The record gives the reactivity of an RNA of 177 nucleotides to 2A3 and DMS.
RNA sequence: GGGAACGACUCGAGUAGAGUCGAAAAGAUAUGGACCUGCUACCCACCCUGUCUCGACCGACGAUCAUUUCAAUCGGAAACGAUUGAAAUGGGAGGUCACGCGAGACAGGAGGCAGGUCCUAAGUCACUACAUGACGUACUUCGGUACGUCAUGUAGAAAAGAAACAACAACAACAAC
Reactivity to 2A3 in 0.01 (KOAc 150mM, MgCl2 10mM, bicine 150mM(pH8.5), 24C), signal-to-noise 1, nucleotides 027 to 126: g140a050u270a230u270g000g000a000c000c030u000g000c020u180a300c040c010c030a050c040c030c000u010g000u030c000u040c030g060a120c040c000g200a300c010g030a100u050c000a000u000u000u000c010a030a040u010c000g090g000a090a000a030c000g020a000u020u020g000a010a000a020u010g000g000g020a020g170g100u000c010a000c060g270c170g010a000g010a000c010a010g000g000a010g030g000c020a000g000g000u000c000c000u000a000a000g000u010c040a030
Reactivity to DMS in 0.01 (KOAc 150mM, MgCl2 10mM, bicine 150mM(pH8.5), 24C), signal-to-noise 3, nucleotides 027 to 126: g010a060u010a150u010g010g010a000c000c000u000g010c000u000a170c020c000c040a300c070c000c000u020g000u010c000u000c000g000a220c160c110g000a020c040g000a300u010c010a000u000u000u000c000a010a000u000c000g000g000a130a070a170c010g030a030u000u000g000a000a010a000u000g000g000g000a240g030g020u000c010a050c040g040c090g000a030g000a010c000a010g000g010a050g000g020c000a010g000g000u010c000c000u000a000a030g000u000c180a200
For DMS, 2,412 sequencing reads were counted. Reactivities are given for positions 27 through 126. 2A3 adducts were read by reverse transcription with SuperScript II with manganese. For DMS the reverse transcriptase was MarathonRT. For 2A3, 2,642 sequencing reads were counted.